[RMDB]
RNA sequence: GGGAACGACUCGAGUAGAGUCGAAAAGUUCAUGUGUUCGCACAUGAACAAAACACGGAGAGAAAAGCACCAUGGACUCAACCGUCGAAAACCAAAGGUGCAAAAGUGGGGGGUUCGCCCCCCACAACGUUACGAAUAGGUUCGCCUAUUCGUAACGAAAAGAAACAACAACAACAAC
Reactivity to 2A3 in 0.01 (KOAc 150mM, MgCl2 10mM, bicine 150mM(pH8.5), 24C), signal-to-noise 4, nucleotides 027 to 126: g000u010u000c000a000u010g010u000g020u020u080c210g040c070a000c000a000u000g000a000a000c000a000a020a010a020c080a010c010g030g000a040g000a010g030a070a080a050a040g010c010a000c020c000a080u150g060g040a070c030u030c060a130a190c100c030g080u110c080g080a080a050a030a060c030c020a080a070a080g000g000u020g000c000a030a030a070a030g010u000g000g000g000g020g020g000u000u020c070g080c000c000c000c010c000c000a000c000a000a000
Reactivity to DMS in 0.01 (KOAc 150mM, MgCl2 10mM, bicine 150mM(pH8.5), 24C), signal-to-noise 3, nucleotides 027 to 126: g020u000u000c000a000u000g020u000g000u000u010c240g020c000a010c000a010u000g010a000a020c000a030a020a090a120c150a040c050g000g020a300g000a050g010a080a100a110a120g000c000a020c000c020a160u000g000g000a180c040u000c000a080a100c020c010g000u000c120g000a030a080a070a190c020c020a030a090a110g000g010u000g010c030a050a040a060a120g030u020g000g000g010g020g020g010u000u000c230g000c010c000c000c000c010c000a000c000a020a060